Structure probing data (DMS and 2A3) for a 177-nucleotide construct.
The reactions ran in a buffer of 150 mM KOAc, 10 mM MgCl2 and 150 mM bicine (pH 8.5), at 24 C.
DMS adducts were read by reverse transcription with MarathonRT.

RNA sequence: GGGAACGACUCGAGUAGAGUCGAAAAGGACAGCCAGACAGCCUGAACGCCUCAACCUCAACGGUUGGCUUGAUUUGCGAUUGCCGCAUUCGCCAAAUUCGAUACGCUGCCAAUCCUGGUGACGCAGUCUCUGGUUCAACUUCGGUUGAACCAGAGAAAAAGAAACAACAACAACAAC
Reactivity to DMS in 0.01 (KOAc 150mM, MgCl2 10mM, bicine 150mM(pH8.5), 24C), signal-to-noise 2, nucleotides 027 to 126: g000g010a080c070a080g010c000c000a090g000a120c110a080g000c010c050u000g000a030a080c110g030c010c010u010c100a040a070c050c010u030c140a170a110c140g030g040u000u000g000g000c040u010u010g010a030u000u000u010g010c030g020a300u010u000g000c090c040g020c030a040u000u000c040g000c000c050a010a030a120u010u010c080g000a070u010a070c160g010c030u030g020c020c040a050a120u000c040c060u000g010g040u000g000a050c110g010c170a090g000
Reactivity to 2A3 in 0.01 (KOAc 150mM, MgCl2 10mM, bicine 150mM(pH8.5), 24C), signal-to-noise 1, nucleotides 027 to 126: g030g010a030c010a020g060c010c010a000g000a110c080a010g010c040c010u050g000a100a010c060g050c010c010u050c050a060a080c020c000u100c110a130a060c030g040g000u030u010g030g020c000u060u180g020a110u030u040u060g020c000g090a090u030u290g160c100c000g100c000a030u000u030c010g010c020c020a010a100a070u090u050c010g020a050u050a180c080g020c010u000g000c020c040a010a090u020c000c040u020g060g010u050g050a060c090g000c040a010g060
Source: RMDB library OK2TRN, as collected in RNAgym. The 2A3 profile rests on 1,247 reads. Values are in units of 0.01, from 0 to 300, in steps of 10.